[RMDB]
RNA sequence: GGGAACGACUCGAGUAGAGUCGAAAAUAGCUAGUCUACUAGCUAGGUCAUGGCACAUGUCGGAUCCUGUCAUCUAGCUAGCUAGUACUCAUGAUCCAUGAGUAGUACGCACUAGACGAUCCGCGUACCGACCCUCCUAAUUCGUUAGGAGGGUCGGAAAAGAAACAACAACAACAAC
Reactivity to DMS in 0.01 (KOAc 150mM, MgCl2 10mM, bicine 150mM(pH8.5), 24C), signal-to-noise 2, nucleotides 027 to 126: u000a040g010c010u000a010g000u020c140u000a120c000u000a010g010c000u000a010g010g010u000c160a120u020g020g010c110a060c150a090u010g040u010c000g000g010a080u000c000c220u000g020u010c200a130u000c020u000a020g010c130u020a080g000c020u000a120g000u000a000c010u020c010a000u000g000a170u020c240c040a040u000g000a000g010u000a010g000u000a030c190g000c020a120c010u000a020g020a080c110g000a030u000c010c030g020c100g010u000a120
Reactivity to 2A3 in 0.01 (KOAc 150mM, MgCl2 10mM, bicine 150mM(pH8.5), 24C), signal-to-noise 2, nucleotides 027 to 126: u110a010g000c010u000a000g010u140c050u080a200c020u030a140g000c000u020a040g000g040u060c050a070u130g170g040c070a050c030a110u180g070u250c040g010g030a040u000c040c070u110g080u170c040a030u010c040u000a010g010c070u010a050g020c010u000a000g110u000a000c000u000c000a010u050g120a300u140c150c070a010u030g000a010g000u020a000g080u010a010c160g000c030a010c010u010a020g020a020c040g010a030u030c000c010g000c010g000u040a090

Record summary
Structure probing data (DMS and 2A3) for a 177-nucleotide construct. Conditions: 150 mM KOAc, 10 mM MgCl2 and 150 mM bicine (pH 8.5), 24 C. For 2A3, 1,899 sequencing reads were counted. The data come from the RNA Mapping Database (RMDB), library OK2TRN.